The data come from the RNA Mapping Database (RMDB), library OK1LIB. The record gives the reactivity of an RNA of 177 nucleotides to DMS and 2A3. The DMS profile rests on 2,007 reads. The reactions ran in a buffer of 150 mM KOAc, 10 mM MgCl2 and 150 mM bicine (pH 8.5), at 24 C.
RNA sequence: GGGAACGACUCGAGUAGAGUCGAAAAUACAUAUGGAGCAUCUCCGCCAGCACCAGAUCGAAAGUUUCUCCCGAAUUAAGUAGCCUCUGGACACCCUCGUCCUCCAUAGUUACAUCGAUGAAUUUGACCACUACGCAGUAUUCGUACUGCGUAGUGGAAAAGAAACAACAACAACAAC
Reactivity to DMS in 0.01 (KOAc 150mM, MgCl2 10mM, bicine 150mM(pH8.5), 24C), signal-to-noise 2, nucleotides 027 to 126: u020a020c110a050u030a050u000g000g000a030g000c070a150u030c050u030c000c040g000c080c040a140g000c020a040c030c040a000g010a050u000c030g020a010a130a030g000u000u010u030c080u010c010c000c000g000a110a080u090u000a080a070g010u000a230g070c010c030u000c000u020g000g000a090c050a040c050c000c000u050c000g010u000c010c030u000c030c030a020u000a080g030u000u000a040c130a040u000c230g020a130u020g020a060a100u000u020u020g030a300
Reactivity to 2A3 in 0.01 (KOAc 150mM, MgCl2 10mM, bicine 150mM(pH8.5), 24C), signal-to-noise 4, nucleotides 027 to 126: u190a010c090a040u110a060u120g040g020a030g030c040a080u040c050u040c030c010g010c010c010a000g010c000a050c020c030a030g070a070u070c040g110a040a070a050g040u040u080u010c040u020c000c030c010g060a010a090u190u090a170a060g070u040a030g040c030c000u000c030u040g050g000a060c030a010c030c000c020u000c000g020u020c000c000u000c000c000a040u040a080g070u050u060a070c030a080u070c090g060a170u100g130a130a270u110u030u160g040a130
Values are in units of 0.01, from 0 to 300, in steps of 10.